The record gives the reactivity of an RNA of 207 nucleotides to 2A3.
RNA sequence: GGGAACGACUCGAGUAGAGUCGAAAAGCAACAGAUAACUGGAUGCAGCGUAGGAUUCUACGCAUAUCCAGUACGAAUGGUACCUGUAAAGAAAAUAAAGUUGGAUGUACAAGUACCAACAGUUGGUUAAGCGAUGGUGAUGUCAAUCACAUUUGCACCCAGUGAUGGAUUUCGAUCCAUCACUGGGAAAAGAAACAACAACAACAAC
Reactivity to 2A3 in 0.01 (KOAc 150mM, MgCl2 10mM, bicine 150mM(pH8.5), 24C), signal-to-noise 2, nucleotides 027 to 156: g030c010a000a010c000a080g070a150u170a200a040c000u000g030g000a020u010g110c150a130g000c100g000u000a020g060g160a300u260u160c040u010a040c000g000c000a000u090a000u030c000c010a000g000u010a000c010g050a100a130u060g000g000u020a020c020c000u000g000u020a000a000a050g070a030a030a030a070u130a100a100a060g140u040u030g060g000a060u070g000u060a010c000a010a000g010u000a000c000c000a010a010c040a040g000u000u020g040g090u070u170a210a080g000c020g060a020u030g030g110u030g000a010u060g100u220c110a130a030u050c000a020c010a030u030u090u240g000c040a000
2A3 adducts were read by reverse transcription with SuperScript II with manganese. The 2A3 profile rests on 623 reads. The RNA was probed in 150 mM KOAc, 10 mM MgCl2 and 150 mM bicine (pH 8.5) at 24 C.